[RMDB]
RNA sequence: GGGAACGACUCGAGUAGAGUCGAAAAAGACAUACGUUCGCGUAUGUCUGACGGGCACCUGACCCUAAGGAAAUGCUCUAUGACAGGACACAGUGAUUGUGAUACCUCGAGAUUUCGAUCUCGAGAAAUCAAUAUUACCUUUCGAGGUAAUAUUGAUAAAAGAAACAACAACAACAAC
Reactivity to 2A3 in 0.01 (KOAc 150mM, MgCl2 10mM, bicine 150mM(pH8.5), 24C), signal-to-noise 9, nucleotides 027 to 126: a000g010a000c000a000u000a000c000g020u010u070c230g000c000g110u010a000u000g000u000c000u000g000a020c020g010g010g000c020a030c030c010u050g130a160c020c000c020u040a060a030g060g030a090a130a080u120g010c010u000c040u070a140u170g130a060c040a060g040g040a050c010a000c010a060g090u080g200a200u180u070g030u020g040a060u110a120c010c000u000c010g010a010g000a010u060u080u150c200g050a020u010c000u000c000g000a010g010a020a020
Reactivity to DMS in 0.01 (KOAc 150mM, MgCl2 10mM, bicine 150mM(pH8.5), 24C), signal-to-noise 9, nucleotides 027 to 126: a010g000a010c000a000u000a000c000g020u000u010c210g030c010g020u000a000u000g000u000c000u000g010a080c190g000g010g010c030a060c020c020u010g000a200c030c010c020u010a080a060g010g000a080a090a090u010g010c030u000c020u000a080u010g000a100c100a050g010g000a160c030a030c050a040g010u010g010a110u010u000g010u000g000a150u000a090c160c000u000c000g000a020g000a020u000u000u010c170g010a020u000c000u000c000g000a020g000a030a070
Notes:
Conditions: 150 mM KOAc, 10 mM MgCl2 and 150 mM bicine (pH 8.5), 24 C. An RNA of 177 nucleotides, treated with 2A3 and DMS and read out base by base. 2A3 adducts were read by reverse transcription with SuperScript II with manganese.